RNA sequence: GGGAACGACUCGAGUAGAGUCGAAAAUUGUACACCUUCGGGUGUACAAGCUGUCUAGUCGCUAGCAAACGAUCAAAGCUAGCGACUAGACUUUAUUGUUCGCGACGUGCGCUUUCGAGCGCACGAAAGUACUAAAAGGUUUCGACCUUUUAGUACUAAAAGAAACAACAACAACAAC
Reactivity to DMS in 0.01 (KOAc 150mM, MgCl2 10mM, bicine 150mM(pH8.5), 24C), signal-to-noise 7, nucleotides 027 to 126: u000u000g000u000a010c000a000c000c000u000u010c220g030g000g030u000g010u000a000c000a010a010g010c230u000g010u000c000u000a010g010u000c000g020c000u000a000g010c000a060a110a150c230g010a120u010c190a090a120a130g000c000u000a000g000c010g010a000c000u000a000g000a000c000u010u010u000a060u010u010g010u000u000c040g000c090g020a180c010g000u000g000c000g000c000u000u000u010c150g000a020g010c000g010c000a000c000g010a020a040
Reactivity to 2A3 in 0.01 (KOAc 150mM, MgCl2 10mM, bicine 150mM(pH8.5), 24C), signal-to-noise 1, nucleotides 027 to 126: u000u000g000u010a010c010a020c000c000u030u060c210g100g040g020u000g000u010a010c000a000a010g000c010u020g030u040c010u000a000g000u000c000g000c000u000a010g010c030a090a050a060c090g180a130u200c070a100a050a030g000c010u000a000g000c000g000a020c000u040a000g000a000c010u010u010u010a030u000u020g020u010u070c110g000c020g300a110c020g010u000g000c010g000c060u100u120u150c300g090a000g000c000g000c020a010c000g000a000a000